The record gives the reactivity of an RNA of 177 nucleotides to DMS and 2A3.
RNA sequence: GGGAACGACUCGAGUAGAGUCGAAAAGAUAUGGAUUGAGGAGACAUGCUCAGGUCUCGGAAACGAGACCGGAGCAACAGCUCCCAAUCCUAAGUCAAACACUUCCCUUUGUUCGCAAAGGGAAGUGGGCUUUACUUUUCUUCGGAAAAGUAAAGCCAAAAGAAACAACAACAACAAC
Reactivity to DMS in 0.01 (KOAc 150mM, MgCl2 10mM, bicine 150mM(pH8.5), 24C), signal-to-noise 2, nucleotides 027 to 126: g020a020u000a070u020g000g000a020u020u000g000a130g020g010a040g020a000c040a300u020g010c010u010c010a050g000g000u010c000u020c000g000g000a020a010a030c010g010a020g000a000c000c000g000g000a020g040c000a030a020c210a200g000c010u000c000c000c000a000a000u000c000c000u000a000a060g000u000c030a090a100a300c010a000c000u000u000c000c000c000u000u000u000g030u000u010c260g020c020a000a010a010g000g000g020a000a000g010u000g000
Reactivity to 2A3 in 0.01 (KOAc 150mM, MgCl2 10mM, bicine 150mM(pH8.5), 24C), signal-to-noise 1, nucleotides 027 to 126: g000a020u030a010u070g020g000a010u000u040g070a190g130g000a000g040a030c270a300u300g040c000u020c030a040g000g000u000c000u000c010g000g010a010a010a000c020g000a010g000a000c020c010g000g000a000g000c010a020a030c030a040g000c000u020c000c040c000a010a000u020c010c000u000a030a010g000u000c030a070a120a100c000a000c000u000u020c000c000c000u010u000u010g060u020u050c250g000c090a010a000a020g000g010g020a000a000g000u010g000
DMS adducts were read by reverse transcription with MarathonRT. Values cover nucleotides 27 to 126. High 2A3 reactivity points to a flexible backbone, as in loops and unpaired stretches. It was measured as part of the RMDB library TTRDES. The RNA was probed in 150 mM KOAc, 10 mM MgCl2 and 150 mM bicine (pH 8.5) at 24 C. For DMS, 1,695 sequencing reads were counted.